The record gives the reactivity of an RNA of 177 nucleotides to 2A3 and DMS.
2A3 is a SHAPE reagent: it acylates the 2'-hydroxyl of flexible nucleotides of all four kinds.
Values cover nucleotides 27 to 126.
The reactions ran in a buffer of 150 mM KOAc, 10 mM MgCl2 and 150 mM bicine (pH 8.5), at 24 C.
For DMS the reverse transcriptase was MarathonRT.
Source: RMDB library M2PK90, as collected in RNAgym.

RNA sequence: GGGAACGACUCGAGUAGAGUCGAAAAGAAAACGGCAGCAAGCCGAGCAAGUAGAGCAACGCGAGCAAGAUCAGCAACGCGAGCAACAUGAGCAACAUGAGCAAGAUCAGCAACUACAGCAUAAAAAUACCAAUCAAUACUUCGGUAUUGAUUGGUAAAAAGAAACAACAACAACAAC
Reactivity to 2A3 in 0.01 (KOAc 150mM, MgCl2 10mM, bicine 150mM(pH8.5), 24C), signal-to-noise 2, nucleotides 027 to 126: g080a020a120a000a000c020g020g020c000a060g090c090a190a100g020c010c030g020a000g000c020a030a050g030u110a020g010a000g060c040a060a060c050g000c000g010a010g000c040a070a000g010a180u110c060a030g020c030a100a110c050g020c020g010a040g010c020a000a060c020a030u070g020a030g060c040a010a050c020a050u090g020a020g000c040a040a010g020a080u110c030a020g030c020a010a030c030u090a040c010a020g070c030a050u170a100a090a020a030a000
Reactivity to DMS in 0.01 (KOAc 150mM, MgCl2 10mM, bicine 150mM(pH8.5), 24C), signal-to-noise 3, nucleotides 027 to 126: g000a110a020a080a150c040g000g020c040a090g020c130a070a080g000c020c020g010a120g020c010a060a050g000u010a040g020a130g010c030a070a090c130g030c020g020a160g020c040a040a030g010a080u020c100a060g020c050a030a040c090g000c070g000a060g000c040a070a060c040a020u000g000a070g000c050a040a060c050a040u000g010a120g030c030a020a030g010a060u010c050a050g000c040a030a040c050u000a030c080a040g000c050a080u000a030a070a100a070a100